[RMDB]
RNA sequence: GGGAACGACUCGAGUAGAGUCGAAAAUGAGGGUAUAGGGGCUGGCUCGUGGAGCCUCCGGGCCGAAAACCCAGAGAGAUUAAUGGAUCUUCUGGAGGCCGUCCUCGUGGCUCACGCCUCGCGGGGGUGACGUGCUGAUAUUCGUAUCAGCACGUCAAAAAGAAACAACAACAACAAC
Reactivity to 2A3 in 0.01 (KOAc 150mM, MgCl2 10mM, bicine 150mM(pH8.5), 24C), signal-to-noise 4, nucleotides 027 to 126: u140g020a090g080g020g020u120a070u120a190g020g010g000g030c060u050g020g020c030u050c090g060u100g070g020a010g010c010c000u010c010c030g000g000g010c050c030g060a050a050a040a060c010c000c010a010g020a000g000a000g010a030u050u080a120a210u300g160g010a020u010c010u020u010c010u060g050g010a020g020g020c050c000g050u030c000c000u010c020g000u060g010g010c000u040c040a030c080g000c000c000u030c050g020c040g000g020g000g000g030
Reactivity to DMS in 0.01 (KOAc 150mM, MgCl2 10mM, bicine 150mM(pH8.5), 24C), signal-to-noise 3, nucleotides 027 to 126: u000g010a120g030g000g010u060a120u020a110g000g010g000g000c070u000g000g010c000u030c030g000u000g010g000a080g010c010c000u000c030c050g000g010g010c040c030g000a090a040a120a120c100c000c010a060g020a050g020a040g000a070u000u010a110a200u060g010g000a060u000c010u000u000c010u030g010g000a100g000g030c090c060g000u010c010c000u000c150g000u010g000g020c020u020c060a080c140g000c030c000u000c110g020c090g000g000g000g000g000